The record gives the reactivity of an RNA of 207 nucleotides to DMS and 2A3. For DMS the reverse transcriptase was MarathonRT.

RNA sequence: GGGAACGACUCGAGUAGAGUCGAAAAUGUGAGUUCAAGAUCAAGGGCCAGCAGAUGGGCUGUCUGAUGAGGGCCCACUUCCUGGAUGGUGGUCUUCUUGCUGUGUCCUCACAUGGCGGAAGGGGUGAGGCUCUCUCUGCAGCCUCUUUUCCAAGGAACCUCCAUUUAAUUUCGAUUAAAUGGAGGUAAAAGAAACAACAACAACAAC
Reactivity to DMS in 0.01 (KOAc 150mM, MgCl2 10mM, bicine 150mM(pH8.5), 24C), signal-to-noise 2, nucleotides 027 to 156: u020g010u010g010a100g000u000u000c020a040a100g010a120u010c030a110a120g020g030g030c010c020a090g030c060a120g010a100u020g030g010g050c000u010g000u020c090u000g010a070u000g000a140g000g030g020c000c000c010a010c010u000u000c050c020u000g010g030a110u010g020g000u000g010g000u010c010u000u010c020u000u020g000c020u000g010u000g010u010c110c120u000c100a110c030a040u010g000g020c030g000g000a090a040g000g010g010g020u000g010a120g010g000c000u000c000u010c060u000c050u010g000c030a110g000c010c000u000c030u010u000u000u000c020c010a060a120g020g000a120
Reactivity to 2A3 in 0.01 (KOAc 150mM, MgCl2 10mM, bicine 150mM(pH8.5), 24C), signal-to-noise 4, nucleotides 027 to 156: u090g040u020g010a070g020u040u120c070a080a060g020a160u070c040a070a090g060g000g000c020c020a030g010c050a020g100a140u160g020g020g010c020u030g060u120c150u050g050a100u160g030a020g000g010g030c020c060c010a000c010u190u160c010c040u080g160g050a100u100g050g120u060g040g040u040c030u030u010c010u130u300g020c010u010g000u000g000u080c040c030u040c000a020c000a000u010g020g000c010g010g010a030a010g000g010g010g010u020g010a170g050g000c000u000c010u010c000u010c010u020g010c010a000g010c000c030u050c000u020u030u030u010c020c000a040a020g050g020a030